[RMDB]
RNA sequence: GGGAACGACUCGAGUAGAGUCGAAAAUCGCAUUCGAACCAAUCUAACGCUCUAUCAGUGAUAACCGCUCGGCAUUAGAUACCCUGAAUGCUGACAACGGUUUCUGCUGUAAGCCGCAGAUACCAGGCCGUGACCCUCCUUUCGAGGAGGGUCACGGAAAAGAAACAACAACAACAAC
Reactivity to 2A3 in 0.01 (KOAc 150mM, MgCl2 10mM, bicine 150mM(pH8.5), 24C), signal-to-noise 2, nucleotides 027 to 126: u100c020g000c130a050u120u000c040g040a060a030c020c060a000a030u000c000u050a130a000c080g090c000u000c080u090a140u110c070a060g070u090g060a110u020a130a010c030c000g040c070u010c050g040g030c000a000u000u000a030g140a190u230a180c000c000c080u040g140a000a000u000g020c040u010g000a000c040a200a030c060g010g010u020u020u020c030u040g060c040u000g030u090a040a000g010c020c000g000c030a000g040a000u020a040c040c000a080g150g080
The record gives the reactivity of an RNA of 177 nucleotides to 2A3. Values are in units of 0.01, from 0 to 300, in steps of 10. For 2A3, 679 sequencing reads were counted.